[RMDB]
RNA sequence: GGGAACGACUCGAGUAGAGUCGAAAAUAGGCAGUGGCUUGGUUAAGGGAACCCACCGGAGCCGUAGCGAAAGCGAGUCUUCAUAGGGCAAUUGUCACUGCUUAUGGACCCGAACCUGGGUGAUCUAUCCAUGACCAGGAUGAAGCUUGGGUGAAACCUCGUCGAAUAGGUUCGCCUAUUCGACGAGAAAAGAAACAACAACAACAAC
Reactivity to 2A3 in 0.01 (KOAc 150mM, MgCl2 10mM, bicine 150mM(pH8.5), 24C), signal-to-noise 1, nucleotides 027 to 156: u000a010g000g010c020a000g000u000g020g020c020u090u070g000g050u220u050a170a090g040g050g010a060a070c010c020c030a050c050c080g000g000a000g020c000c000g030u050a000g030c090g080a040a020a000g000c010g020a020g020u030c000u060u000c000a060u130a100g000g070g000c050a090a140u140u060g000u000c020a000c030u000g030c000u000u000a000u010g000g050a070c000c000c070g020a030a020c000c010u040g000g000g030u030g050a160u080c100u160a020u000c040c020a040u090g170a150c010c130a130g010g010a010u010g000a040a000g010c020u050u000g000g010g010u040g010a060a030a040c040
Structure probing data (2A3) for a 207-nucleotide construct. The data come from the RNA Mapping Database (RMDB), library PDB130. For 2A3, 736 sequencing reads were counted. Values cover nucleotides 27 to 156.